Chemical mapping of a 177-nucleotide RNA with DMS and 2A3. The RNA was probed in 150 mM KOAc, 10 mM MgCl2 and 150 mM bicine (pH 8.5) at 24 C. Values cover nucleotides 27 to 126. For DMS the reverse transcriptase was MarathonRT.

RNA sequence: GGGAACGACUCGAGUAGAGUCGAAAAACACGAUACGUCGUGAACUGGACAAAAUUAAAAUGCUCUUCUGUCAGUGUAAUAGUUCAUAUGGGCACUGACAGGAGAGCGUUUUGACUUUGUCAAGUAAAUAUUGUAUAGUAUUCGUACUAUACAAUAUAAAAGAAACAACAACAACAAC
Reactivity to DMS in 0.01 (KOAc 150mM, MgCl2 10mM, bicine 150mM(pH8.5), 24C), signal-to-noise 8, nucleotides 027 to 126: a130c010a010c010g000a030u010a060c180g030u000c000g020u000g000a170a050c010u000g000g010a010c010a000a010a010a020u000u000a000a000a010a010u000g000c000u000c000u000u000c000u000g000u000c000a000g010u010g010u000a140a030u000a050g000u020u040c270a110u010a030u010g000g010g000c000a010c000u000g000a010c000a000g000g000a000g000a000g010c000g000u000u010u000u000g010a010c050u000u000u000g000u000c000a030a020g010u010a080a100
Reactivity to 2A3 in 0.01 (KOAc 150mM, MgCl2 10mM, bicine 150mM(pH8.5), 24C), signal-to-noise 9, nucleotides 027 to 126: a000c010a000c000g010a010u060a060c200g080u010c000g000u030g040a100a030c030u050g040g000a000c000a000a010a000a010u000u010a000a000a000a000u010g000c000u000c000u000u000c000u000g000u000c000a010g000u000g010u030a060a130u040a100g140u150u160c110a020u090a060u200g140g210g000c000a000c000u000g000a000c000a000g000g000a000g000a000g000c000g000u000u000u000u000g000a000c000u010u000u000g000u000c000a000a000g040u050a010a110